The record gives the reactivity of an RNA of 207 nucleotides to 2A3 and DMS. For 2A3 the reverse transcriptase was SuperScript II with manganese. The RNA was probed in 150 mM KOAc, 10 mM MgCl2 and 150 mM bicine (pH 8.5) at 24 C.
[RMDB]
RNA sequence: GGGAACGACUCGAGUAGAGUCGAAAAGCUAUGGUGCAACUCUUUAAGGCAAUAACGAACUAAUUCUAAGCAAGUAAUGGAGAAAUGCCAGGGUCAUUAUCUAGCCAUAAUAGUGCUUGACAGUAUGAGAAUCUGCUACCCUUCGGGGUAGCAGAAACUAUCGGCUAGAGUUCGCUCUAGCCGAUAGAAAAGAAACAACAACAACAAC
Reactivity to 2A3 in 0.01 (KOAc 150mM, MgCl2 10mM, bicine 150mM(pH8.5), 24C), signal-to-noise 2, nucleotides 027 to 156: g060c060u030a050u140g030g020u020g050c070a050a060c030u050c060u090u160u100a090a050g070g010c070a080a150u100a140a070c100g020a020a030c020u090a130a030u230u000c040u090a000a070g030c020a080a030g070u080a070a060u150g010g010a040g050a060a090a020u060g000c020c020a000g040g000g030u020c000a030u040u140a020u080c060u050a010g030c020c000a000u040a240a080u050a110g080u070g030c010u070u060g040a020c040a040g110u150a140u190g080a020g040a040a080u000c000u000g030c000u000a000c000c000c020u020u020c150g040g000g000g000u000a000g000c000a000g000a000a000a000
Reactivity to DMS in 0.01 (KOAc 150mM, MgCl2 10mM, bicine 150mM(pH8.5), 24C), signal-to-noise 1, nucleotides 027 to 156: g000c060u000a060u020g000g030u020g000c020a080a090c030u030c060u000u010u020a080a140g070g040c030a130a060u000a070a070c050g010a080a150c080u020a060a140u010u000c040u000a060a170g020c030a070a070g000u010a120a120u020g000g030a030g030a080a090a110u000g010c030c040a080g000g010g020u000c020a130u000u000a040u000c030u010a150g000c010c060a130u000a050a030u000a090g000u010g010c030u000u000g000a160c050a030g000u000a080u000g020a140g000a100a110u010c000u000g010c000u000a000c000c000c000u000u000c250g050g020g000g020u010a000g000c000a000g000a040a010a120